[RMDB]
RNA sequence: GGGAACGACUCGAGUAGAGUCGAAAAGCAAGCUAGCCGGCAAAAAAGCAAACUUGACCACCAAGGAUAAAAGAGAUCUUAUCCAAGGAUGCAAAAGAUAAUCUCACUUUUGACACCCACUGAUCUGAAAACGUGCGGUUCUUCGGAACCGCACGAACAUUAUUAUCUGGUUCGCCAGAUAAUAAUGAAAAGAAACAACAACAACAAC
Reactivity to DMS in 0.01 (KOAc 150mM, MgCl2 10mM, bicine 150mM(pH8.5), 24C), signal-to-noise 1, nucleotides 027 to 156: g030c030a060a070g000c000u000a300g020c020c010g000g000c030a000a040a130a200a160a070g000c000a090a110a050c010u000u020g020a160c060c040a110c060c010a060a300g010g000a040u000a040a030a040a040g000a120g040a080u000c000u000u000a040u000c010c030a070a170g020g000a080u000g010c000a000a010a040a070g010a100u000a070a060u000c070u000c040a270c040u000u010u000u000g030a120c020a040c010c000c020a200c100u000g040a060u000c000u000g000a080a030a090a160c030g090u000g040c000g020g020u000u000c000u000u020c300g040g030a030a030c000c000g120c000a010c000g000a000a050
Reactivity to 2A3 in 0.01 (KOAc 150mM, MgCl2 10mM, bicine 150mM(pH8.5), 24C), signal-to-noise 4, nucleotides 027 to 156: g040c020a020a000g000c010u070a010g010c000c030g090g020c120a060a100a040a040a030a010g060c050a080a060a020c030u030u030g060a080c030c010a020c010c020a060a040g010g000a020u030a060a050a030a030g180a020g010a040u010c010u020u020a000u020c010c040a020a040g020g010a040u060g010c010a000a020a020a040g020a070u110a170a130u110c070u060c080a040c010u020u030u030u040g060a080c030a050c030c020c010a030c070u060g020a070u060c020u040g050a050a080a040a040c010g000u000g010c010g000g040u000u010c010u030u040c050g100g000a000a010c000c000g000c000a000c000g000a000a000